[RMDB]
Structure probing data (DMS) for a 177-nucleotide construct.
Values cover nucleotides 27 to 126.
Source: RMDB library OK2TRN, as collected in RNAgym.
Values are in units of 0.01, from 0 to 300, in steps of 10.

RNA sequence: GGGAACGACUCGAGUAGAGUCGAAAACGGCGCCGGCGCGUUCCAGGCCGGGAGUCACUGGAGGCACCCCUGGGACGCCGAGCAGCCCGAGAACCCCGGGGUGGCCUCCGCUGCGGCUCGGGUUUGCCGUAGGCUUGCGAUUCGUCGCAAGCCUACGAAAAGAAACAACAACAACAAC
Reactivity to DMS in 0.01 (KOAc 150mM, MgCl2 10mM, bicine 150mM(pH8.5), 24C), signal-to-noise 1, nucleotides 027 to 126: c040g040g010c070g000c050c010g010g050c040g020c060g000u000u000c040c020a120g020g000c030c030g010g020g030a050g040u000c000a070c130u000g000g000a000g010g030c010a050c030c010c000c000u010g010g000g000a140c130g000c110c010g020a090g030c080a080g020c010c070c050g000a090g000a090a180c030c010c000c050g010g000g000g000u000g000g000c010c010u000c000c010g010c120u000g020c040g010g010c000u000c020g010g000g020u000u000u000g020c160